[RMDB]
RNA sequence: GGGAACGACUCGAGUAGAGUCGAAAAUCAGACCUACCCUGUGAUUAUGGGUGACUACGUAGCACAGCAGGCACGGUGGGCGCGUAUCGACGUUCAACCUAGUACUGCACUAUCGAAGCCGAAGCCGCAGAACAGGACGAUUCGUCGUCCUGUUCUGAAAAGAAACAACAACAACAAC
Reactivity to DMS in 0.01 (KOAc 150mM, MgCl2 10mM, bicine 150mM(pH8.5), 24C), signal-to-noise 4, nucleotides 027 to 126: u010c150a110g000a210c050c040u010a070c020c020c000u000g000u000g020a170u000u000a070u000g010g010g030u000g010a070c050u000a080c060g010u000a050g020c120a100c170a130g020c010a020g020g010c090a100c200g010g020u000g000g000g020c000g000c050g010u020a150u000c180g010a040c020g000u000u000c010a050a080c000c000u000a230g020u010a060c080u000g000c030a110c030u000a040u010c060g010a130a040g030c020c010g010a110a080g010c090c100g010
Reactivity to 2A3 in 0.01 (KOAc 150mM, MgCl2 10mM, bicine 150mM(pH8.5), 24C), signal-to-noise 2, nucleotides 027 to 126: u010c020a040g040a030c010c000u010a030c040c000c010u010g060u030g120a170u100u190a100u170g030g020g050u030g040a030c030u030a050c070g140u080a000g040c050a020c020a170g020c010a020g070g000c050a020c070g020g000u030g000g000g010c020g000c000g030u100a120u300c090g140a190c020g070u030u030c060a170a180c020c000u030a040g020u100a120c000u010g000c020a000c010u000a020u120c050g040a040a010g010c030c000g040a050a010g040c030c040g020